[RMDB]
RNA sequence: GGGAACGACUCGAGUAGAGUCGAAAAGCAGCGGGACAAACACAGGCCCAGGCAGUGCAAAGAUGCCUUCUAGCCCUGGUGUGCGCCUGAACUAUGUUUUGACCUCCCUGGGUCUAGCUGUUGCACCACUCGAAUAGAACUUCGGUUCUAUUCGAGUAAAAGAAACAACAACAACAAC
Reactivity to 2A3 in 0.01 (KOAc 150mM, MgCl2 10mM, bicine 150mM(pH8.5), 24C), signal-to-noise 8, nucleotides 027 to 126: g000c000a000g010c020g030g000g020a100c250a140a110a000c060a030c020a110g020g000c020c000c000a000g030g000c010a000g020u060g130c020a010a080a020g070a050u140g090c050c000u050u040c050u050a030g000c000c010c020u080g110g020u150g080u100g060c070g030c000c010u010g000a030a030c050u100a080u240g110u030u030u030u060g140a180c000c010u020c030c010c020u050g000g000g010u010c010u010a050g000c010u010g020u030u020g010c020a040c020c010
Reactivity to DMS in 0.01 (KOAc 150mM, MgCl2 10mM, bicine 150mM(pH8.5), 24C), signal-to-noise 5, nucleotides 027 to 126: g010c020a040g000c030g000g000g010a100c130a090a090a110c190a110c180a070g000g000c030c020c030a010g000g010c160a020g000u000g010c050a030a060a080g010a070u020g010c120c140u020u010c070u000a250g000c000c040c030u000g020g020u010g010u020g030c130g000c000c020u010g000a050a050c110u000a090u030g010u000u000u010u010g000a070c040c010u000c190c000c030u020g000g000g000u000c010u000a090g000c020u000g000u020u010g000c120a230c050c050